[RMDB]
Overview
Structure probing data (2A3 and DMS) for a 207-nucleotide construct. The RNA was probed in 150 mM KOAc, 10 mM MgCl2 and 150 mM bicine (pH 8.5) at 24 C. DMS adducts were read by reverse transcription with MarathonRT. The 2A3 profile rests on 3,783 reads. It was measured as part of the RMDB library RNAMAK. The DMS profile rests on 2,507 reads. 2A3 adducts were read by reverse transcription with SuperScript II with manganese.

RNA sequence: GGGAACGACUCGAGUAGAGUCGAAAAGGGGUCAUCGGUGGCUAGCGGGAGAGCCACACUGAAGCCUCCACGGUGUGAGCUCAUCGAUCGCUAGCGUAACAUCCGAUGACGGAGGCACCCAAAGUCGAAGGAUAGGUUUCGACCUAUCCUUCGACAACUAUCGAAUCGUGUUCGCACGAUUCGAUAGAAAAGAAACAACAACAACAAC
Reactivity to 2A3 in 0.01 (KOAc 150mM, MgCl2 10mM, bicine 150mM(pH8.5), 24C), signal-to-noise 3, nucleotides 027 to 156: g080g000g040g000u010c000a010u000c000g020g000u010g040g000c000u000a000g000c010g020g130g010a050g000a000g020c000c000a000c000a000c000u030g010a120a030g000c000c000u000c010c000a010c000g000g000u020g000u000g020a150g000c020u010c040a220u300c090g080a060u090c000g030c060u050a000g000c010g010u000a000a020c020a040u050c000c000g000a000u010g000a000c000g000g010a000g010g010c010a040c000c000c000a050a080a020g000u000c000g000a000a000g010g010a000u010a000g000g000u000u160u180c200g040a020c000c010u010a000u040c010c000u010u000c000g000a000c000a000a000
Reactivity to DMS in 0.01 (KOAc 150mM, MgCl2 10mM, bicine 150mM(pH8.5), 24C), signal-to-noise 1, nucleotides 027 to 156: g030g020g020g020u000c000a030u000c000g000g010u020g000g000c000u000a010g000c000g020g000g020a090g080a030g000c010c010a020c030a050c000u000g020a010a120g000c000c010u000c010c000a290c000g000g010u010g090u000g000a180g130c010u000c000a290u000c120g010a050u000c030g010c010u000a030g010c080g010u000a070a050c100a150u010c010c010g010a000u020g000a010c010g000g010a030g090g030c050a120c020c020c010a110a100a210g000u000c010g010a040a020g000g000a020u000a010g000g000u000u000u000c300g030a060c000c040u000a000u000c000c000u000u000c000g000a010c000a010a120